Chemical mapping of a 177-nucleotide RNA with DMS and 2A3. The reactions ran in a buffer of 150 mM KOAc, 10 mM MgCl2 and 150 mM bicine (pH 8.5), at 24 C. DMS (dimethyl sulfate) methylates the pairing face of unpaired adenines and cytosines.
RNA sequence: GGGAACGACUCGAGUAGAGUCGAAAAGUGAACAUCACCGGUUGAGCUGGAUUUCGGGGCCCUCAACUCCCCUACUCUCAGCGCAAACAAACACAUCUGAAAAGGCAUCGGCCCCCGCUGGGACUGGGAAUCACACUACUUUCGAGUAGUGUGAUUCAAAAGAAACAACAACAACAAC
Reactivity to DMS in 0.01 (KOAc 150mM, MgCl2 10mM, bicine 150mM(pH8.5), 24C), signal-to-noise 4, nucleotides 027 to 126: g010u010g010a130a060c080a080u030c050a050c060c030g000g010u000u000g000a110g000c070u020g000g000a080u010u000u010c110g010g000g020g000c140c010c060u000c110a030a080c120u000c020c000c000c050u010a050c130u000c030u010c040a020g000c010g010c160a020a090a100c160a030a080a060c110a030c100a110u020c070u010g030a050a060a110a080g030g020c050a080u000c030g000g000c010c020c000c030c010g010c040u000g010g000g000a120c090u000g000g020
Reactivity to 2A3 in 0.01 (KOAc 150mM, MgCl2 10mM, bicine 150mM(pH8.5), 24C), signal-to-noise 6, nucleotides 027 to 126: g050u040g030a060a030c030a100u100c030a010c040c030g040g000u030u060g020a030g020c070u050g040g010a070u080u060u100c070g020g000g050g000c000c020c000u070c010a020a050c020u030c000c000c000c000u010a040c000u000c000u010c010a010g010c010g000c050a050a050a060c020a010a080a010c070a020c010a120u070c040u090g050a070a050a050a060g070g010c030a070u060c050g110g000c010c000c000c010c000g010c010u030g010g020g020a030c040u050g060g040

It was measured as part of the RMDB libraries RFM100 and RFMREP.